Conditions: 150 mM KOAc, 10 mM MgCl2 and 150 mM bicine (pH 8.5), 24 C. Chemical mapping of a 177-nucleotide RNA with DMS and 2A3. The 2A3 profile rests on 3,025 reads. For DMS, 4,927 sequencing reads were counted.

RNA sequence: GGGAACGACUCGAGUAGAGUCGAAAAAACAGAGACAAUCAGACAGACACGCAGAAAAGGGGGAGUAGGGCGGAAUAAAAAGCAGCGCGCACAGCAACAAUCUUCCUAGCUGGCAUCAAGCUGCACGCAGUCGGGUAAAUUUCGAUUUACCCGACUGAAAAGAAACAACAACAACAAC
Reactivity to DMS in 0.01 (KOAc 150mM, MgCl2 10mM, bicine 150mM(pH8.5), 24C), signal-to-noise 4, nucleotides 027 to 126: a080a060c150a040g000a080g000a080c140a050a060u040c080a030g010a090c100a070g000a070c050a000c030g020c030a080g020a050a030a090a090g000g000g010g030g040a070g010u010a060g000g000g020c020g000g000a080a040u040a040a040a080a080a070g020c010a000g000c010g000c220g000c030a060c010a020g000c010a090a090c240a040a060u040c130u020u030c070c010u000a170g000c010u010g010g020c020a060u020c200a040a090g000c020u000g010c030a070c190g000
Reactivity to 2A3 in 0.01 (KOAc 150mM, MgCl2 10mM, bicine 150mM(pH8.5), 24C), signal-to-noise 4, nucleotides 027 to 126: a000a010c110a010g010a030g070a070c020a030a090u120c020a020g040a080c000a000g040a020c020a030c090g020c010a010g110a060a130a000a010g020g010g010g000g000a050g020u070a040g030g050g000c020g020g030a080a040u180a100a110a020a030a000g010c010a000g000c000g040c040g010c050a090c030a280g010c020a000a090c020a060a160u040c040u090u010c020c000u040a020g000c020u010g000g000c000a020u120c030a070a080g000c010u010g010c030a010c050g030